This 207-nucleotide RNA was probed chemically with DMS and 2A3. Reactivities are given for positions 27 through 156. The DMS profile rests on 2,231 reads. It was measured as part of the RMDB library M2RFPK.

RNA sequence: GGGAACGACUCGAGUAGAGUCGAAAAGAAAGAAAGAAAGCGGUUGGGUGGGUCCAUCGACCGUCGUGGCGUAUUCGGACGCUUUACCACGACGCGAGGAAUUAGCGAGACCGACCACCCCCUUUAACAGAGGUAUAGUAGUUCGCUACUAUACCAAGUAACGAAUAAACUUCGGUUUAUUCGUUACAAAAGAAACAACAACAACAAC
Reactivity to DMS in 0.01 (KOAc 150mM, MgCl2 10mM, bicine 150mM(pH8.5), 24C), signal-to-noise 1, nucleotides 027 to 156: g000a060a060a120g000a120a060a100g000a100a110a080g010c070g030g000u000u000g000g000g080u000g020g010g000u000c010c010a160u010c040g000a040c110c000g010u000c010g020u000g010g010c030g030u000a080u000u000c050g080g000a140c050g030c170u000u030u000a050c030c020a050c010g000a030c030g010c040g000a120g000g010a060a090u000u000a130g030c080g060a120g010a180c040c020g030a030c010c010a080c010c000c020c010c000u010u000u010a020a140c160a160g010a110g020g000u000a010u000a010g030u010a050g020u000u000c300g010c030u010a000c010u010a020u010a000c010c000a000a030
Reactivity to 2A3 in 0.01 (KOAc 150mM, MgCl2 10mM, bicine 150mM(pH8.5), 24C), signal-to-noise 3, nucleotides 027 to 156: g040a000a040a010g050a030a070a040g090a030a100a020g090c110g050g050u220u190g120g020g040u030g030g010g030u010c020c010a080u110c020g020a020c050c010g000u000c000g000u000g000g010c040g040u080a140u120u160c120g070g020a030c010g000c010u080u070u110a040c000c010a010c000g010a000c000g000c010g010a010g000g070a090a130u110u030a030g060c010g000a050g020a060c040c000g020a010c000c000a010c000c000c030c010c000u000u040u080a170a080c110a030g060a040g120g000u000a000u000a010g000u000a000g010u000u060c270g010c060u000a000c000u000a000u010a000c010c000a000a000